Chemical mapping of a 207-nucleotide RNA with 2A3 and DMS. The RNA was probed in 150 mM KOAc, 10 mM MgCl2 and 150 mM bicine (pH 8.5) at 24 C. Values cover nucleotides 27 to 156. Source: RMDB library OK3TST, as collected in RNAgym. The DMS profile rests on 10,999 reads. DMS adducts were read by reverse transcription with MarathonRT. For 2A3, 2,444 sequencing reads were counted.
[RMDB]
RNA sequence: GGGAACGACUCGAGUAGAGUCGAAAAGUAAUCUCACAGGAAAAGAUGUUGGAUGGCUUUGCUGCAGAUUGAGGACCUAGAUCUGUUGGAAUGUACAUGCAGAAAGUGAGGCGAUUGGGCCACGAUCCCCUUCAUUCAAUACUGGUGAAAGAGCCCAUAAUCCAUAAAUGUUCGCAUUUAUGGAUUAAAAAGAAACAACAACAACAAC
Reactivity to 2A3 in 0.01 (KOAc 150mM, MgCl2 10mM, bicine 150mM(pH8.5), 24C), signal-to-noise 4, nucleotides 027 to 156: g050u060a020a130u030c010u020c010a030c020a060g140g030a070a100a020a030g070a050u130g030u140u040g080g030a030u020g030g030c020u050u030u100g030c010u020g000c020a030g010a140u090u070g060a070g060g040a030c000c000u020a020g000a070u030c030u020g050u040u060g050g040a050a010u060g010u090a060c010a060u070g040c040a010g070a080a070a020g080u050g020a010g000g030c030g030a030u040u070g010g010g000c000c030a060c020g030a060u080c010c010c000c010u030u020c020a040u090u050c010a060a000u060a180c060u110g020g000u020g010a040a020a030g040a010g010c000c000c000a010
Reactivity to DMS in 0.01 (KOAc 150mM, MgCl2 10mM, bicine 150mM(pH8.5), 24C), signal-to-noise 4, nucleotides 027 to 156: g010u000a110a120u000c010u010c020a110c040a170g010g020a110a090a070a110g020a060u010g020u000u010g000g030a090u000g010g010c040u000u000u000g000c010u000g000c030a060g010a110u000u000g010a120g030g010a090c050c040u000a120g010a070u000c030u000g040u000u010g010g010a040a050u000g020u000a090c070a090u010g020c030a080g010a060a050a080g010u000g010a070g020g030c060g010a170u000u010g010g000g010c010c030a040c070g010a130u000c020c010c010c030u000u010c030a060u000u000c060a060a130u010a110c090u000g010g010u000g000a050a070a120g010a160g000c010c010c000a160